RNA sequence: GGGAACGACUCGAGUAGAGUCGAAAACCAUGGGACGGAGAUAUGGAAAGGGUCUCGUACGCUGUAAGACUAACUUCGGUUGAGCUUGCGAUAUGGGCCUAUGCCUGGAUAAGUCAUAAUGUUACUGACGUUCCAAAAUUUUCGAAUUUUGGAACGUAAAAGAAACAACAACAACAAC
Reactivity to DMS in 0.01 (KOAc 150mM, MgCl2 10mM, bicine 150mM(pH8.5), 24C), signal-to-noise 4, nucleotides 027 to 126: c020c000a190u040g010g000g020a060c030g010g010a100g010a100u020a060u010g010g000a090a090a300g000g000g010u000c020u010c010g040u000a030c030g020c030u000g010u000a020a050g020a150c020u000a020a030c060u010u020c170g030g000u000u000g000a050g010c010u020u010g000c010g000a100u000a010u010g030g000g020c020c020u010a050u010g000c010c030u000g010g000a070u020a080a120g010u000c040a090u010a100a100u030g000u000u000a080c030u000g000
Reactivity to 2A3 in 0.01 (KOAc 150mM, MgCl2 10mM, bicine 150mM(pH8.5), 24C), signal-to-noise 6, nucleotides 027 to 126: c000c010a070u120g050g040g010a010c020g100g030a070g030a110u120a060u220g040g040a030a070a140g090g010g020u040c050u030c110g020u030a020c020g000c020u040g010u050a010a020g030a080c000u020a030a020c000u090u090c170g100g000u020u040g090a000g000c020u000u010g020c010g060a040u010a010u100g020g000g020c000c010u060a090u150g050c010c010u020g020g040a070u050a180a030g000u010c000a020u100a110a090u170g020u020u020a040c030u050g030